[RMDB]
RNA sequence: GGGAACGACUCGAGUAGAGUCGAAAAGCCAGGACUAACUUCUUGUUUACCAAGGUUUCAACGCAGACUUGAAAGACCUGCUUAGGCCACCAAUUUGGCAUACAUGAUAUGGGAAUUAUCCCUUCCAUCCGGAGAUGUAAUUCGUUACAUCUCCGGAAAAAGAAACAACAACAACAAC
Reactivity to 2A3 in 0.01 (KOAc 150mM, MgCl2 10mM, bicine 150mM(pH8.5), 24C), signal-to-noise 2, nucleotides 027 to 126: g090c030c010a030g080g040a100c040u090a100a070c030u110u030c010u090u040g000u010u070u070a030c000c020a070a060g060g000u050u120u160c030a060a030c050g020c030a030g000a060c010u040u100g050a180a040a000g000a040c020c020u010g010c000u070u110a040g010g000c000c010a020c020c010a050a100u090u080u060g020g010c020a040u040a080c070a060u160g000a060u050a090u140g000g020g030a000a120u150u080a150u290c010c000c000u070u000c010c020a050
Reactivity to DMS in 0.01 (KOAc 150mM, MgCl2 10mM, bicine 150mM(pH8.5), 24C), signal-to-noise 2, nucleotides 027 to 126: g000c010c030a130g020g030a150c140u020a110a200c080u000u000c020u000u010g000u000u010u000a100c040c040a070a060g010g000u000u010u010c080a050a050c230g000c060a030g000a040c070u010u000g010a140a180a100g010a130c060c010u010g010c050u000u000a130g000g000c060c020a050c140c110a050a130u010u000u000g010g010c000a040u000a030c070a060u010g020a080u010a050u000g000g010g020a120a090u020u010a130u000c000c010c010u000u000c050c070a220
Structure probing data (2A3 and DMS) for a 177-nucleotide construct. The reactions ran in a buffer of 150 mM KOAc, 10 mM MgCl2 and 150 mM bicine (pH 8.5), at 24 C. It was measured as part of the RMDB library OK2TRN. Values are in units of 0.01, from 0 to 300, in steps of 10. For DMS the reverse transcriptase was MarathonRT.